[RMDB]
Source: RMDB library RFM100, as collected in RNAgym. The record gives the reactivity of an RNA of 177 nucleotides to 2A3.
RNA sequence: GGGAACGACUCGAGUAGAGUCGAAAAGUGCCUGAGCAGACGGGGUUGUGGUGGCCCGCCAGCGGGGGAUGCCAGGCCACCUCCCCCAGCGGCACGCAGCCCCUCUCUUAAUUAGAUCGGUUUUCCCGGAUGACUGUCGUUUCGACGACAGUCAUCCAAAAGAAACAACAACAACAAC
Reactivity to 2A3 in 0.01 (KOAc 150mM, MgCl2 10mM, bicine 150mM(pH8.5), 24C), signal-to-noise 1, nucleotides 027 to 126: g150u100g050c000c000u090g020a050g000c150a000g000a020c180g000g030g000g000u060u040g040u050g300g300u040g060g070c060c000c070g010c000c000a030g090c100g030g000g000g000g020a000u040g000c030c020a090g000g080c000c000a010c000c020u030c000c010c000c000c000a000g000c000g000g000c000a000c000g000c040a020g010c000c000c000c000u000c000u000c000u020u080a040a020u100u080a030g020a140u230c030g000g000u000u000u140u000c000c010c000
Source information
Reactivities are given for positions 27 through 126.